Source: RMDB library OK1LIB, as collected in RNAgym. An RNA of 177 nucleotides, treated with 2A3 and DMS and read out base by base. For 2A3, 26,976 sequencing reads were counted.
RNA sequence: GGGAACGACUCGAGUAGAGUCGAAAAUCGUGAGAUGUGGUGCCUCACGCGCUCGAGGCGUCCGUGGUCAGAGAGACCACUGACGCAAAAACUCGAGCGCAAAUAAAUCGCAUUACAUCCAGAAUAACACUAGUAAAUGAUUCGUCAUUUACUAGUGAAAAGAAACAACAACAACAAC
Reactivity to 2A3 in 0.01 (KOAc 150mM, MgCl2 10mM, bicine 150mM(pH8.5), 24C), signal-to-noise 9, nucleotides 027 to 126: u130c060g030u060g060a290g000a050u010g010u010g000g010u010g010c000c020u120c030a090c130g000c000g000c000u000c000g000a000g010g000c000g000u000c000c000g000u000g000g000u010c040a050g100a060g030a020g000a300c000c000a000c000u000g000a000c000g000c000a060a100a050a050a050c000u000c000g000a000g000c000g000c000a000a000a000u060a000a050a030u120c050g000c000a000u000u000a010c000a000u000c010c010a020g070a080a080u230a130a010
Reactivity to DMS in 0.01 (KOAc 150mM, MgCl2 10mM, bicine 150mM(pH8.5), 24C), signal-to-noise 8, nucleotides 027 to 126: u030c050g000u030g000a090g010a000u000g020u000g010g010u000g000c030c190u030c190a140c190g000c000g020c000u000c000g010a010g010g000c000g000u000c000c090g020u010g010g000u000c000a170g010a200g010a190g000a010c010c000a000c010u000g000a000c000g010c040a030a030a060a100a300c000u010c010g010a000g000c000g010c000a020a040a080u020a050a090a110u020c300g000c000a000u000u000a000c020a000u010c010c020a090g000a110a060u040a090a140